RNA sequence: GGGAACGACUCGAGUAGAGUCGAAAACCUUCUGCGGUGAUCCUCCCUCUCCUUGUCGGUGAACCCGCUCUUGUGAGGCCUCUUCAUAGGUCCGGAGUCGACCUCCAUCUGAUCUGUUCGGGCCCUCCAGUUAAGACUUGUUCGCAAGUCUUAACUGAAAAGAAACAACAACAACAAC
Reactivity to DMS in 0.01 (KOAc 150mM, MgCl2 10mM, bicine 150mM(pH8.5), 24C), signal-to-noise 3, nucleotides 027 to 126: c020c000u000u000c100u000g020c100g010g020u010g010a140u000c050c020u000c020c010c010u000c030u000c030c020u000u000g010u000c030g000g020u010g010a120a130c060c010c030g010c080u000c060u000u000g020u010g020a090g020g010c050c020u000c080u010u010c100a090u010a040g020g020u010c030c160g000g000a050g020u010c070g010a090c120c010u000c020c040a090u000c110u010g000a060u000c040u000g000u000u000c170g010g010g020c030c010c030u000c070
Reactivity to 2A3 in 0.01 (KOAc 150mM, MgCl2 10mM, bicine 150mM(pH8.5), 24C), signal-to-noise 1, nucleotides 027 to 126: c010c000u060u070c070u140g110c070g040g040u060g030a160u070c000c010u030c000c020c000u040c000u030c000c000u020u080g020u060c010g040g030u020g050a060a060c020c010c000g040c010u030c010u070u090g040u060g040a090g020g000c000c010u060c000u120u030c050a070u070a110g050g000u000c030c020g010g010a030g020u040c060g050a060c030c000u060c000c000a050u020c040u050g030a030u030c030u030g060u060u030c020g040g000g000c040c000c000u010c030
Chemical mapping of a 177-nucleotide RNA with DMS and 2A3. The RNA was probed in 150 mM KOAc, 10 mM MgCl2 and 150 mM bicine (pH 8.5) at 24 C. For DMS, 3,963 sequencing reads were counted. Source: RMDB library 15KREP, as collected in RNAgym.